[RMDB]
RNA sequence: GGGAACGACUCGAGUAGAGUCGAAAAGUCCAGUUCGCUGGACAUGAUGAUAUGGACAUUAUACAAGCGAGGUCGAAGAACAGAGCUCGGAAACGAGCUCUGGGAGACCUCGAACUACUUGUGAUGUCCUAAGUCGACGAACCCCCUUCGGGGGGAAUUAAAGAUUGCAUUUCGAUGCAAUCUUUAAAAAAGAAACAACAACAACAAC
Reactivity to 2A3 in 0.01 (KOAc 150mM, MgCl2 10mM, bicine 150mM(pH8.5), 24C), signal-to-noise 1, nucleotides 027 to 156: g010u010c000c000a010g010u050u080c200g000c140u000g000g000a000c040a000u090g030a020u070g000a000u000a040u060g000g000a020c010a010u110u120a240u110a200c010a030a000g010c020g000a000g000g030u000c020g090a300a040g010a000a020c000a010g000a000g010c000u000c000g000g080a060a000a000c010g000a030g020c030u000c000u000g010g000g000a020g000a010c000c000u000c000g000a000a010c020u070a010c000u030u010g000u010g010a000u010g000u000c030c000u000a020a000g000u010c010g000a150c050g100a100a100c010c030c010c000c000u000u120c160g060g000g000g000g020g040a000a000
Reactivity to DMS in 0.01 (KOAc 150mM, MgCl2 10mM, bicine 150mM(pH8.5), 24C), signal-to-noise 1, nucleotides 027 to 156: g020u000c000c020a020g010u000u000c220g090c000u010g010g000a000c020a080u000g000a110u000g000a200u010a290u000g000g000a040c000a020u000u000a120u000a130c010a030a050g000c010g000a020g030g040u010c020g000a150a150g000a110a260c010a040g000a020g050c020u000c000g010g050a050a060a140c010g000a020g000c000u000c000u020g000g010g000a100g010a000c000c000u000c000g020a010a040c020u000a060c020u000u000g060u020g000a030u000g000u000c000c000u000a000a210g010u000c030g010a160c040g010a130a210c000c000c010c010c020u020u020c250g010g000g110g040g020g030a000a010